[RMDB]
RNA sequence: GGGAACGACUCGAGUAGAGUCGAAAAGCUAUGGUGCAACUCUUUAAGGCAAUAACGAACUAAUUCUAAGCAAGUAAUGGAGAAAUGCCUGGGUCACUAUCUAGCCAUAAUAGUGCUUGACAGUAUGAGAAUCUGCUACCCUUCGGGGUAGCAGAAAGAAUACGAUCUUCUUCGGAAGAUCGUAUUCAAAAGAAACAACAACAACAAC
Reactivity to 2A3 in 0.01 (KOAc 150mM, MgCl2 10mM, bicine 150mM(pH8.5), 24C), signal-to-noise 3, nucleotides 027 to 156: g010c020u040a030u100g000g010u020g020c040a080a090c060u050c050u100u160u210a110a070g010g000c030a050a120u060a080a060c080g030a010a010c030u080a150a030u100u040c000u090a080a020g070c050a100a040g050u120a150a100u140g080g010a040g030a140a090a040u080g000c000c010u020g000g020g000u010c010a010c020u020a030u080c060u040a020g000c010c000a020u050a150a070u060a150g140u080g070c050u070u060g070a080c040a040g060u070a120u150g080a070g050a080a130u020c000u000g010c000u000a010c000c000c000u000u050c150g060g000g000g000u000a000g000c000a000g000a000a000a000
Reactivity to DMS in 0.01 (KOAc 150mM, MgCl2 10mM, bicine 150mM(pH8.5), 24C), signal-to-noise 2, nucleotides 027 to 156: g010c050u000a020u010g020g010u000g010c060a040a080c020u000c000u000u000u010a070a080g020g020c020a090a150u000a090a090c070g000a160a150c060u010a070a120u000u010c040u000a140a140g000c080a050a170g010u010a030a080u000g010g010a110g000a090a070a170u000g010c010c000u000g040g010g020u000c020a050c040u000a000u000c050u000a080g010c020c040a100u010a040a090u020a100g040u000g000c030u000u000g010a150c030a090g010u000a120u010g010a120g000a100a120u000c000u000g000c000u000a000c000c000c000u000u000c300g070g030g000g000u000a010g000c000a000g000a000a000a060